[RMDB]
RNA sequence: GGGAACGACUCGAGUAGAGUCGAAAAGUAAGGUCUACGAAGGCGCUCGCGUCAAUGACAAUAGAUUCGUCAUCACGGAUGAGCGCGGUAGAAAUGUUAACGUUGUCCGGCGUCACGAAUACCAGGAAAUACUCCUUCCGUAUGGCGGUAGCUCAAAGGUAUAUAUUCGUUUCGACGAAUAUAUACCAAAAGAAACAACAACAACAAC
Reactivity to DMS in 0.01 (KOAc 150mM, MgCl2 10mM, bicine 150mM(pH8.5), 24C), signal-to-noise 2, nucleotides 027 to 156: g040u000a050a120g000g010u000c020u000a010c030g040a080a020g040g020c010g000c000u020c010g000c000g030u010c080a060a020u000g000a030c030a120a190u010a170g020a270u010u000c130g000u000c000a030u000c030a040c000g000g010a150u000g020a020g040c000g050c070g020g000u000a040g010a030a090a080u000g010u000u000a070a160c120g050u000u000g030u000c030c020g000g040c020g030u000c010a070c030g000a140a040u000a030c050c020a120g000g020a070a080a120u010a120c070u000c010c000u010u000c010c020g080u010a060u000g000g010c020g010g010u000a100g010c030u000c060a080a130a150
Reactivity to 2A3 in 0.01 (KOAc 150mM, MgCl2 10mM, bicine 150mM(pH8.5), 24C), signal-to-noise 4, nucleotides 027 to 156: g120u110a080a030g130g040u000c010u000a020c060g080a170a030g150g000c000g000c000u010c000g020c010g050u030c030a050a040u030g010a000c000a020a070u180a190g300a300u240u260c130g020u010c010a000u030c030a000c030g040g090a170u090g000a060g000c000g000c010g000g000u000a000g020a040a050a030u080g010u090u070a030a020c050g010u020u030g040u100c070c000g020g020c000g030u040c050a020c120g070a050a010u060a100c030c090a020g070g040a030a070a040u200a140c050u020c020c000u040u030c020c030g020u080a020u020g090g000c030g010g000u030a040g000c010u040c090a050a040a000
Conditions: 150 mM KOAc, 10 mM MgCl2 and 150 mM bicine (pH 8.5), 24 C.
This 207-nucleotide RNA was probed chemically with DMS and 2A3.
DMS (dimethyl sulfate) methylates the pairing face of unpaired adenines and cytosines.
Source: RMDB library OK3TST, as collected in RNAgym.
For DMS, 4,362 sequencing reads were counted.